[RMDB]
RNA sequence: GGGAACGACUCGAGUAGAGUCGAAAACCUUCUCUUUCUGCUUUUACUUUUUCCUCAAUUGAAAGAAACCCACUGACAACCAAUGACAUGAAUGGGCUGCAGAGAAGGCACUUCUGCAAACUUCACCACCCACCUCCUCCCUGCAAAGCCGCAGACACCCAUUAUACGGGUUCGCCCGUAUAAUGGGAAAAGAAACAACAACAACAAC
Reactivity to 2A3 in 0.01 (KOAc 150mM, MgCl2 10mM, bicine 150mM(pH8.5), 24C), signal-to-noise 1, nucleotides 027 to 156: c000c010u020u060c000u010c000u000u010u030c080u050g080c010u000u100u110u090a140c050u100u130u060u070u070c010c020u060c000a090a090u080u150g040a150a100a000g060a130a100a110c050c050c000a060c170u110g070a040c000a100a030c110c010a140a150u100g090a070c030a070u100g070a140a060u040g040g000g100c050u070g000c040a000g010a010g030a050a080g070g000c040a020c070u100u020c040u010g000c000a050a120a120c010u100u090c030a030c100c040a050c010c000c010a020c010c000u030c000c000u030c020c000c000u000g030c040a110a040a040g000c010c010g000c120a000g010a030c010a010
Structure probing data (2A3) for a 207-nucleotide construct. The RNA was probed in 150 mM KOAc, 10 mM MgCl2 and 150 mM bicine (pH 8.5) at 24 C. 2A3 adducts were read by reverse transcription with SuperScript II with manganese. Reactivities are given for positions 27 through 156.